[RMDB]
RNA sequence: GGGAACGACUCGAGUAGAGUCGAAAAUGUUAAUUAUUACUGGGCUAGGUAUUUACACAUUAUUAAAUUAUCAAGAUCGGAGGGGACAAGAUGAAAGAGAAUGAUGUCGUGUUAAGAACGGUCACGAAAGUAGGGAGUGGUUCGCCACUCCCUACUUAAAAGAAACAACAACAACAAC
Reactivity to DMS in 0.01 (KOAc 150mM, MgCl2 10mM, bicine 150mM(pH8.5), 24C), signal-to-noise 3, nucleotides 027 to 126: u010g010u020u020a050a060u030u010a060u030u050a120c080u010g000g010g000c030u000a080g010g020u000a030u000u000u000a040c180a040c110a020u020u040a140u000u000a040a080a050u030u010a080u000c060a040a130g000a070u000c040g000g010a030g020g000g030g000a070c090a040a080g030a030u020g010a060a040a110g010a100g020a070a070u000g000a050u010g000u000c050g060u000g020u000u030a040a080g010a050a060c100g010g030u000c030a040c050g010a020
Reactivity to 2A3 in 0.01 (KOAc 150mM, MgCl2 10mM, bicine 150mM(pH8.5), 24C), signal-to-noise 2, nucleotides 027 to 126: u100g000u030u090a030a000u080u180a000u010u240a030c050u080g040g000g040c030u000a040g260g000u090a150u050u070u100a090c150a000c000a000u000u080a040u120u170a200a000a000u190u190a100u130c200a210a060g000a140u110c010g030g000a050g060g010g000g000a000c000a010a000g000a010u030g160a040a060a120g020a000g000a000a200u020g150a030u070g130u070c130g010u050g010u010u060a040a000g030a130a000c160g000g160u170c020a030c060g230a160

Chemical mapping of a 177-nucleotide RNA with DMS and 2A3. Source: RMDB library OK1LIB, as collected in RNAgym. For 2A3, 785 sequencing reads were counted. The RNA was probed in 150 mM KOAc, 10 mM MgCl2 and 150 mM bicine (pH 8.5) at 24 C.